The record gives the reactivity of an RNA of 177 nucleotides to DMS and 2A3. For DMS the reverse transcriptase was MarathonRT. 2A3 adducts were read by reverse transcription with SuperScript II with manganese. Conditions: 150 mM KOAc, 10 mM MgCl2 and 150 mM bicine (pH 8.5), 24 C.

RNA sequence: GGGAACGACUCGAGUAGAGUCGAAAAAGGUCACCCCUAACAGGAAGUGAUCGAAAGGGAAGCUGGUUAAUAUUCCAGCGCCUCAGGUGUUUUGCCAUAUAUAUACGCUUUGGGAUAGAGAGUGUAUUUGGCAAAUAGAAUUCGUUCUAUUUGCCAAAAAAGAAACAACAACAACAAC
Reactivity to DMS in 0.01 (KOAc 150mM, MgCl2 10mM, bicine 150mM(pH8.5), 24C), signal-to-noise 5, nucleotides 027 to 126: a180g000g000u000c010a020c010c020c000c000u020a170a120c270a170g010g000a090a140g010u010g010a010u000c000g000a060a120a100g000g000g000a090a120g020c010u010g000g010u010u020a080a120u020a190u060u010c000c000a000g000c010g020c110c010u000c130a070g020g000u000g000u010u010u000u010g010c030c030a090u020a080u010a070u040a070u000a020c000g000c000u000u000u000g000g020g010a140u010a100g000a050g010a020g000u000g000u010a020u000
Reactivity to 2A3 in 0.01 (KOAc 150mM, MgCl2 10mM, bicine 150mM(pH8.5), 24C), signal-to-noise 3, nucleotides 027 to 126: a010g000g000u010c000a000c000c000c000c000u070a160a040c040a070g000g080a190a120g050u000g010a000u020c020g040a100a060a020g040g000g040a120a050g000c000u000g050g000u080u080a140a010u070a140u190u090c010c000a000g000c000g050c010c000u050c040a020g000g060u010g070u110u130u120u140g020c010c050a020u030a000u010a000u000a000u010a150c010g000c010u050u060u060g060g040g090a060u120a120g090a000g000a010g010u030g020u010a040u000